RNA sequence: GGGAACGACUCGAGUAGAGUCGAAAAGAUAUGGACUGUGGGAGCGUUAACAUCGGAAACGAUGUCCACGCGAAGAACACACAUGUCCUAAGUCAAACGCAGGGAGGUGUUCGCACCUCCCUGCGAACGAUCCUACUUACUUCGGUAAGUAGGAUCGAAAAGAAACAACAACAACAAC
Reactivity to 2A3 in 0.01 (KOAc 150mM, MgCl2 10mM, bicine 150mM(pH8.5), 24C), signal-to-noise 1, nucleotides 027 to 126: g010a000u060a050u150g010g020a020c010u010g000u000g000g050g070a070g040c000g020u090u050a000a000c000a010u000c030g020g070a040a060a040c010g000a030u010g000u000c030c050a020c030g000c040g070a170a030g090a110a010c080a000c020a000c010a110u300g030u000c010c000u010a050a020g040u040c000a130a060a010c020g000c020a040g000g000g030a020g010g040u060g020u140u300c300g020c090a000c000c000u000c020c000c000u010g000c000g000a010a000
Reactivity to DMS in 0.01 (KOAc 150mM, MgCl2 10mM, bicine 150mM(pH8.5), 24C), signal-to-noise 2, nucleotides 027 to 126: g000a030u010a160u020g020g000a000c010u000g010u000g000g010g020a160g020c000g030u000u000a120a000c000a010u000c000g010g000a050a050a120c000g030a000u000g000u000c040c230a010c010g000c010g000a080a090g000a070a230c150a060c000a000c020a020u040g000u000c000c000u000a010a110g010u000c030a110a140a240c050g020c000a000g040g020g000a030g020g030u000g000u000u010c170g020c000a000c000c000u000c000c000c000u000g010c000g010a000a030
The record gives the reactivity of an RNA of 177 nucleotides to 2A3 and DMS. DMS adducts were read by reverse transcription with MarathonRT. The DMS profile rests on 1,749 reads. For 2A3, 2,520 sequencing reads were counted.